Chemical mapping of a 177-nucleotide RNA with DMS and 2A3. For 2A3 the reverse transcriptase was SuperScript II with manganese.
[RMDB]
RNA sequence: GGGAACGACUCGAGUAGAGUCGAAAAAUUGUAAAACUCGCAGUGACAAAGAGAGUGGGUAGGGUUUGAGGCCCCUGUUCCUGAGGACUUGAGUGCUGUUUUACAUACGGGUCAGACACGGCUAGAGCCUACUACUAGUGUUCGCACUAGUAGUAGGAAAAGAAACAACAACAACAAC
Reactivity to DMS in 0.01 (KOAc 150mM, MgCl2 10mM, bicine 150mM(pH8.5), 24C), signal-to-noise 8, nucleotides 027 to 126: a090u020u010g010u000a040a040a060a070c040u000c110g010c040a060g010u010g010a100c120a070a080a070g000a100g000a080g030u010g000g000g000u010a080g010g000g000u010u010u020g010a110g010g000c070c010c010c030u000g010u010u000c010c010u000g020a120g010g010a080c040u010u000g000a090g020u010g000c040u010g000u000u000u000u010a040c080a060u010a090c090g000g010g000u000c030a040g000a130c110a050c060g010g020c050u010a070g010a140g000
Reactivity to 2A3 in 0.01 (KOAc 150mM, MgCl2 10mM, bicine 150mM(pH8.5), 24C), signal-to-noise 8, nucleotides 027 to 126: a000u070u060g020u020a020a020a020a030c020u050c080g000c020a040g050u050g120a080c070a050a120a010g110a020g020a020g040u120g010g010g030u060a070g020g010g020u050u060u140g100a080g040g040c000c000c000c000u020g040u080u080c010c000u050g040a100g030g040a030c020u050u070g030a020g070u050g020c030u020g030u030u030u020u030a020c020a000u070a040c040g030g000g010u020c020a010g020a090c020a020c080g020g000c010u040a020g010a010g090